[RMDB]
RNA sequence: GGGAACGACUCGAGUAGAGUCGAAAAUAAACUCAUCACUGCUAUCGUUCGCGGUAAUAUCAGAAGACCGCGAAACGUGCCUCUGCAACCUUUUUGCCUCUCUCUUCUGUUUAUCCAGUGCCUCGACGCUCGGGUCACUGUUCGCAGUGACCCGAGCAAAAGAAACAACAACAACAAC
Reactivity to 2A3 in 0.01 (KOAc 150mM, MgCl2 10mM, bicine 150mM(pH8.5), 24C), signal-to-noise 1, nucleotides 027 to 126: u080a000a040a000c020u010c010a040u080c010a000c060u080g000c070u110a000u110c030g090u060u000c010g010c070g010g000u000a050a140u180a230u260c110a010g190a290a000g030a120c000c000g010c000g000a000a000a000c000g020u040g000c000c000u010c040u030g060c030a060a060c000c000u000u000u000u130u090g110c020c000u000c000u000c000u000c000u080u010c060u010g080u090u010u150a140u070c040c030a070g000u010g040c000c020u070c000g000a010c160